Chemical mapping of a 177-nucleotide RNA with DMS and 2A3. DMS adducts were read by reverse transcription with MarathonRT. For 2A3 the reverse transcriptase was SuperScript II with manganese. The RNA was probed in 150 mM KOAc, 10 mM MgCl2 and 150 mM bicine (pH 8.5) at 24 C. The DMS profile rests on 2,881 reads.
[RMDB]
RNA sequence: GGGAACGACUCGAGUAGAGUCGAAAAAAAAAAGAUAUGGACGUAAUUGUCAGCUGCAAUCAUCGAUCGAGCUCGGAAACGAGCUCGGGAGAGCAGCUUGGAUUUAUUACGUCCUAAGUCAAAAAAACAAUAGUUUAAUGUUCGCAUUAAACUAUUGAAAAGAAACAACAACAACAAC
Reactivity to DMS in 0.01 (KOAc 150mM, MgCl2 10mM, bicine 150mM(pH8.5), 24C), signal-to-noise 3, nucleotides 027 to 126: a000a020a040a060a050a060g000a030u000a230u010g000g000a010c010g030u000a000a000u000u010g010u000c020a050g000c000u000g000c000a210a070u010c220a160u010c010g000a300u000c000g000a020g000c000u000c000g000g000a050a070a100c000g000a000g010c000u000c000g020g010g000a300g000a080g010c000a000g010c000u000u010g000g010a030u000u010u000a000u000u010a000c000g010u000c000c000u000a000a040g000u010c010a000a010a030a060a070a060a140
Reactivity to 2A3 in 0.01 (KOAc 150mM, MgCl2 10mM, bicine 150mM(pH8.5), 24C), signal-to-noise 2, nucleotides 027 to 126: a000a030a000a000a020a090g030a010u020a000u060g000g000a000c000g010u010a000a010u020u020g040u030c080a000g020c000u020g000c010a080a300u190c070a150u130c120g020a000u040c010g030a000g000c000u000c020g030g020a030a070a040c010g000a010g000c090u000c020g000g000g000a020g000a000g000c020a000g010c000u020u080g080g000a030u230u300u140a020u020u040a010c010g000u020c000c000u000a000a010g000u000c010a000a000a040a020a000a040a180